[RMDB]
RNA sequence: GGGAACGACUCGAGUAGAGUCGAAAAAGUGCUGGAGCCAGUAGCGCAAGUGGAACUCGGGGAAGUCGACGAACUUGCCGUCGCGCCGACGGUGUCCGCGGGACGGAGCGAGUACUGCGAUGCCGCACACGCGGAGAUCGUUCGCGAUCUCCGCGUGAAAAGAAACAACAACAACAAC
Reactivity to DMS in 0.01 (KOAc 150mM, MgCl2 10mM, bicine 150mM(pH8.5), 24C), signal-to-noise 2, nucleotides 027 to 126: a040g000u000g030c070u010g050g000a180g020c030c030a060g010u000a070g020c060g030c010a070a120g000u000g000g010a090a080c070u000c030g030g040g010g010a080a080g020u000c000g000a100c040g010a040a050c040u000u000g000c080c050g010u000c030g000c030g020c070c070g030a000c040g010g010u010g010u000c040c130g000c060g020g010g020a050c040g010g000a220g010c030g000a040g020u000a070c060u010g000c030g020a120u000g020c040c000g050c040a160
Reactivity to 2A3 in 0.01 (KOAc 150mM, MgCl2 10mM, bicine 150mM(pH8.5), 24C), signal-to-noise 1, nucleotides 027 to 126: a020g070u010g020c040u060g010g030a060g010c050c030a020g010u050a040g000c050g010c030a060a020g020u090g040g010a060a040c020u000c050g000g040g000g060a060a040g110u070c050g020a120c000g010a160a020c030u040u150g050c000c000g000u040c010g000c010g030c010c000g000a000c050g110g170u070g030u110c030c010g000c000g040g040g000a040c020g000g040a020g060c060g030a010g060u030a050c000u010g040c020g090a100u130g040c060c010g000c000a010
Annotation
Chemical mapping of a 177-nucleotide RNA with DMS and 2A3. For DMS the reverse transcriptase was MarathonRT. The RNA was probed in 150 mM KOAc, 10 mM MgCl2 and 150 mM bicine (pH 8.5) at 24 C. It was measured as part of the RMDB library OK2TRN.